[RMDB]
RNA sequence: GGGAACGACUCGAGUAGAGUCGAAAAGAUCUUAUGCUGACUAGCCCAUAUUUGGAUGAAAAAGCAGCAAAAAAGUGCGUUGUACCUAUCUUUAUUGUCAUUAAAGUACCGUGCAGGCUUGCACUUGCCUGGUCAAUACCUUCGGGUAUUGACCAGGAAAAGAAACAACAACAACAAC
Reactivity to DMS in 0.01 (KOAc 150mM, MgCl2 10mM, bicine 150mM(pH8.5), 24C), signal-to-noise 2, nucleotides 027 to 126: g030a100u030c050u030u000a140u020g010c020u000g030a100c050u010a170g020c140c000c000a080u050a100u020u000u000g030g010a170u020g000a030a030a180a140a050g000c000a000g000c060a000a020a060a100a030a030g000u000g030c020g000u000u000g000u000a000c000c020u000a120u030c000u000u010u000a010u010u030g000u020c200a130u010u000a010a020a010g000u010a110c300c160g000u000g000c000a040g000g020c130u010u010g010c060a010c010u010u000g040
Reactivity to 2A3 in 0.01 (KOAc 150mM, MgCl2 10mM, bicine 150mM(pH8.5), 24C), signal-to-noise 3, nucleotides 027 to 126: g110a040u040c030u060u130a050u100g000c000u020g100a230c010u080a050g100c010c000c000a000u050a180u170u200u070g050g000a060u040g040a010a000a000a080a000g000c020a000g000c000a010a010a030a010a010a010g030u030g040c090g010u010u010g000u000a000c000c030u070a120u300c020u080u010u030a090u050u180g300u190c120a090u050u100a000a000a000g000u010a030c020c000g000u000g000c020a010g160g000c000u050u200g000c000a000c000u000u000g030

Conditions: 150 mM KOAc, 10 mM MgCl2 and 150 mM bicine (pH 8.5), 24 C. Chemical mapping of a 177-nucleotide RNA with DMS and 2A3.